[RMDB]
RNA sequence: GGGAACGACUCGAGUAGAGUCGAAAAAACGACCAAAUCAUGCACUUUACCUCCGCCGUCUUUUUCGACCAAAAUUGAGAGCAUAUCAACAAUGAACUUCUGUAUGUACUCAUUCAAAGCAGGAGCUCGACACUGAUACACCACCAAGUCAAGGUACCCAAGGGUAAUAGUUCGCUAUUACCCUUGGAAAAGAAACAACAACAACAAC
Reactivity to 2A3 in 0.01 (KOAc 150mM, MgCl2 10mM, bicine 150mM(pH8.5), 24C), signal-to-noise 4, nucleotides 027 to 156: a000a010c070g020a020c060c020a020a040a050u130c060a050u070g050c060a040c100u130u100u090a050c030c020u060c040c020g010c000c010g050u050c070u000u080u000u030u030c030g010a030c010c040a050a060a110a180u120u080g030a050g010a000g070c020a030u020a010u090c020a030a110c020a100a160u160g020a060a030c010u030u020c020u020g040u040a070u060g040u040a070c010u030c090a030u220u080c000a070a070a040g030c000a010g020g020a000g000c010u000c020g020a020c020a020c080u030g020a040u050a060c050a040c060c000a020c080c010a040a000g130u080c030a040a050g180g030u130a060c040
Reactivity to DMS in 0.01 (KOAc 150mM, MgCl2 10mM, bicine 150mM(pH8.5), 24C), signal-to-noise 2, nucleotides 027 to 156: a110a060c050g010a160c010c020a010a080a110u000c030a110u010g000c050a100c000u000u000u010a050c030c040u000c050c010g020c030c030g010u000c000u000u010u010u000u020c010g010a100c030c040a060a050a020a170u010u010g030a090g010a220g040c010a090u000a080u000c010a080a130c030a090a170u010g000a000a040c040u000u000c010u000g010u000a080u000g060u000a260c150u020c150a140u000u010c060a060a120a300g000c000a060g020g010a040g000c020u000c020g050a120c150a030c030u000g000a090u000a050c040a070c060c000a030c000c010a040a070g020u010c020a070a050g000g050u000a140c140